The record gives the reactivity of an RNA of 177 nucleotides to 2A3 and DMS. It was measured as part of the RMDB library M2PK50. For DMS the reverse transcriptase was MarathonRT. The DMS profile rests on 1,338 reads. The RNA was probed in 150 mM KOAc, 10 mM MgCl2 and 150 mM bicine (pH 8.5) at 24 C. The 2A3 profile rests on 3,275 reads. Reactivities are given for positions 27 through 126.
RNA sequence: GGGAACGACUCGAGUAGAGUCGAAAACGUCGCGUGUUCGCACGCGACGAAACGAGAAACGGCAAAUAAGCCGUUCCCAGGCGAUCGUACGCCAUACUCAAAAAAGUCCCUGCUUCGGCAGGGACAACUGUAACCUUAUCUUCGGAUAAGGUUACAGAAAAGAAACAACAACAACAAC
Reactivity to 2A3 in 0.01 (KOAc 150mM, MgCl2 10mM, bicine 150mM(pH8.5), 24C), signal-to-noise 2, nucleotides 027 to 126: c010g020u000c000g000c010g020u020g030u050u030c150g030c070a010c000g020c010g000a000c000g010a010a030a000c040g010a010g040a050a040a000c000g000g020c060a090a120a260u200a290a050g020c010c010g000u000u020c000c000c000a010g000g000c020g040a100u160c150g100u170a080c000g010c000c020a030u080a080c050u090c060a060a070a000a000a020a050g000u000c000c000c000u020g010c000u040u060c210g090g000c020a000g000g000g000a000c000a000a000
Reactivity to DMS in 0.01 (KOAc 150mM, MgCl2 10mM, bicine 150mM(pH8.5), 24C), signal-to-noise 2, nucleotides 027 to 126: c020g010u000c010g050c000g060u030g000u000u000c190g040c000a020c000g010c000g000a010c010g010a000a070a110c080g020a110g010a110a060a020c000g020g000c000a070a080a120u020a130a120g020c000c000g010u000u000c000c000c020a150g010g000c000g010a080u000c250g000u000a170c020g010c010c000a110u000a070c080u010c050a010a040a050a110a090a130g000u000c000c020c000u000g000c000u000u010c110g000g000c000a020g000g000g000a000c010a000a000